[RMDB]
RNA sequence: GGGAACGACUCGAGUAGAGUCGAAAAGAUAUGGAGCUGCAUGGGAGUCGAUAAUCGGAAACGAUUAUACGACGAAGAACAUGUCAGCUCCUAAGUCAAAACUGCCGAAUCUUCGGAUUCGGCAGAACGACGUUAACUUGUUCGCAAGUUAACGUCGAAAAGAAACAACAACAACAAC
Reactivity to DMS in 0.01 (KOAc 150mM, MgCl2 10mM, bicine 150mM(pH8.5), 24C), signal-to-noise 1, nucleotides 027 to 126: g000a010u000a030u000g010g000a020g030c000u020g030c000a020u010g040g000g020a020g030u010c000g010a090u020a000a000u000c000g050g030a010a020a020c000g020a000u000u000a000u000a160c040g020a010c000g040a070a120g020a180a300c010a000u000g010u040c020a010g000c000u000c010c010u000a000a090g000u000c020a150a040a160a220c000u000g020c020c010g000a020a000u000c000u000u010c240g000g000a040u000u000c000g000g000c000a000g000a030a120
Reactivity to 2A3 in 0.01 (KOAc 150mM, MgCl2 10mM, bicine 150mM(pH8.5), 24C), signal-to-noise 1, nucleotides 027 to 126: g000a000u000a000u040g000g000a000g000c000u010g070c010a010u000g000g010g190a270g020u000c000g000a020u010a020a000u010c000g000g040a000a000a000c000g010a010u010u110a030u090a290c060g000a000c000g000a100a000g050a000a000c000a000u030g220u300c050a010g000c020u000c000c010u000a000a000g020u000c000a020a020a200a300c010u010g000c040c010g000a010a020u000c010u110u260c300g150g010a020u040u020c090g020g050c000a000g010a010a000
Overview:
Conditions: 150 mM KOAc, 10 mM MgCl2 and 150 mM bicine (pH 8.5), 24 C. This 177-nucleotide RNA was probed chemically with DMS and 2A3. It was measured as part of the RMDB library TTRDES. DMS adducts were read by reverse transcription with MarathonRT. 2A3 adducts were read by reverse transcription with SuperScript II with manganese.